[RMDB]
RNA sequence: GGGAACGACUCGAGUAGAGUCGAAAAGAUAUGGACGUCUUGCGGACCUUUGAUCUUCCCUCGGAAACGAGGGAAGGGAGGUCCGUAAGAGCGUCCUAAGUCAAAAUCAAGUGCUUCGGCACUUGAAGAAUACAAAACUCUUCGGAGUUUUGUAUUCAAAAGAAACAACAACAACAAC
Reactivity to DMS in 0.01 (KOAc 150mM, MgCl2 10mM, bicine 150mM(pH8.5), 24C), signal-to-noise 3, nucleotides 027 to 126: g010a070u020a300u000g000g000a000c000g010u000c010u000u000g000c000g010g020a010c000c000u000u000u020g020a060u030c010u000u000c000c000c000u010c000g000g000a110a130a160c000g010a010g000g010g000a010a000g000g010g010a000g010g020u000c000c010g030u000a000a010g000a070g030c000g020u000c000c000u010a020a110g010u000c040a120a120a160a210u000c000a020a020g020u010g010c010u000u000c270g020g020c010a000c000u000u010g010a030a090
The record gives the reactivity of an RNA of 177 nucleotides to DMS. The data come from the RNA Mapping Database (RMDB), library TTRDES.